Chemical mapping of a 177-nucleotide RNA with DMS and 2A3. 2A3 adducts were read by reverse transcription with SuperScript II with manganese. Conditions: 150 mM KOAc, 10 mM MgCl2 and 150 mM bicine (pH 8.5), 24 C. For DMS, 5,698 sequencing reads were counted.
[RMDB]
RNA sequence: GGGAACGACUCGAGUAGAGUCGAAAAGCAAGACGCAGCAUAUCAACAGUCAUCUCAAUAUGCGGCAGGCUUGGCAACUUGCCGCCGAUAUGCCGCACGGUCAAUCCGGUGCGAUAGCGUGCGCCGGCCUUCCUACUGGAUUCGUCCAGUAGGAAGGAAAAGAAACAACAACAACAAC
Reactivity to DMS in 0.01 (KOAc 150mM, MgCl2 10mM, bicine 150mM(pH8.5), 24C), signal-to-noise 5, nucleotides 027 to 126: g020c130a110a100g010a080c080g020c020a090g000c010a020u010a020u000c040a090a150c150a120g000u010c140a070u010c050u000c080a110a070u010a080u000g020c010g000g000c000a030g000g000c030u000u000g020g000c060a080a130c080u000u000g010c000c000g010c010c130g000a030u000a050u010g010c000c010g010c010a050c060g000g000u020c160a070a150u010c010c000g000g000u000g010c010g010a110u010a080g020c090g030u000g000c040g020c010c000g000g000
Reactivity to 2A3 in 0.01 (KOAc 150mM, MgCl2 10mM, bicine 150mM(pH8.5), 24C), signal-to-noise 7, nucleotides 027 to 126: g090c060a050a040g090a040c030g010c020a000g000c000a020u030a010u060c020a030a160c020a060g190u110c030a200u040c060u010c050a060a130u170a090u300g000c000g000g000c000a010g020g000c020u130u140g040g030c020a060a080c040u040u080g010c000c000g000c010c000g030a020u020a020u100g000c010c000g030c010a010c030g060g000u070c040a040a090u060c020c000g040g010u030g000c010g050a080u140a060g100c080g040u070g020c010g000c010c000g020g000